[RMDB]
Chemical mapping of a 170-nucleotide RNA with 2A3 and DMS.
Conditions: 150 mM KOAc, 10 mM MgCl2 and 150 mM bicine (pH 8.5), 24 C.
For 2A3 the reverse transcriptase was SuperScript II with manganese.

RNA sequence: GGGAACGACUCGAGUAGAGUCGAAAACGCCCCCGGGCGCUCCCCUCUGUCCACCUUCGAGGGGGUUCACACCUCCAGGCGGCGGGCCGGCUACUCUUCUUUUCCUUUUCUCGUCUUCCUCGGUCAGUCAGGAUCGGCUUCGGCCGAUCCAAAAGAAACAACAACAACAAC
Reactivity to 2A3 in 0.01 (KOAc 150mM, MgCl2 10mM, bicine 150mM(pH8.5), 24C), signal-to-noise 2, nucleotides 027 to 129: c030g050c010c000c030c010c030g030g000g020c020g030c010u010c000c020c010c000u010c030u030g100u000c010c020a070c000c050u050u110c030g040a140g030g000g000g000g000u110u090c000a050c030a000c020c000u000c020c000a020g050g000c000g020g000c010g000g000g000c000c000g020g030c040u030a000c020u000c000u090u010c000u060u070u010u030c000c000u040u010u000u020c030u000c000g070u030c020u130u080c020c010u010c000g000g020u110c040a030g030u040c040a050
Reactivity to DMS in 0.01 (KOAc 150mM, MgCl2 10mM, bicine 150mM(pH8.5), 24C), signal-to-noise 1, nucleotides 027 to 129: c080g030c060c000c010c190c170g040g020g030c020g070c050u020c010c030c010c090u000c010u020g020u000c030c030a040c030c000u040u080c000g040a230g000g020g000g010g010u000u000c060a140c140a200c050c020u010c030c020a030g020g000c080g040g010c070g030g000g070c090c070g020g010c080u010a090c080u020c050u080u000c000u000u000u000u000c030c060u000u000u000u000c000u020c000g000u030c090u060u000c020c040u000c040g010g010u010c000a000g000u020c110a170